[RMDB]
About this RNA: An RNA of 207 nucleotides, treated with 2A3 and read out base by base. Conditions: 150 mM KOAc, 10 mM MgCl2 and 150 mM bicine (pH 8.5), 24 C.

RNA sequence: GGGAACGACUCGAGUAGAGUCGAAAACUCGGUGUUUCGACACCGAGAAAAAAUCCUAAGUCAGCUAUCUUGGAUUUAGCUAGGGAGUCGGAAACGACGAAGAACUAGCUUGUCAGAUACGCUGAUAUGGAAAAAAAGACGCGGUUCGCCGCGUCAAGCCCUAUGAUAUGUUCGCAUAUCAUAGGGCAAAAGAAACAACAACAACAAC
Reactivity to 2A3 in 0.01 (KOAc 150mM, MgCl2 10mM, bicine 150mM(pH8.5), 24C), signal-to-noise 2, nucleotides 027 to 156: c000u000c000g020g010u040g010u040u180u120c160g080a010c000a000c010c010g000a000g000a000a000a000a000a000a010u030c010c000u020a070a010g010u010c000a000g000c010u000a000u020c000u140u300g080g030a090u300u300u080a010g000c000u000a000g000g000g020a020g010u000c020g010g000a130a090a070c010g020a000c010g090a150a040g000a020a010c000u000a000g000c000u000u000g000u010c010a000g000a010u000a020c140g000c000u000g000a000u000a000u020g020g020a040a100a040a070a000a000a130g010a000c010g040c010g000g030u090u080c290g030c100c000g020c000g000u030c010a000a020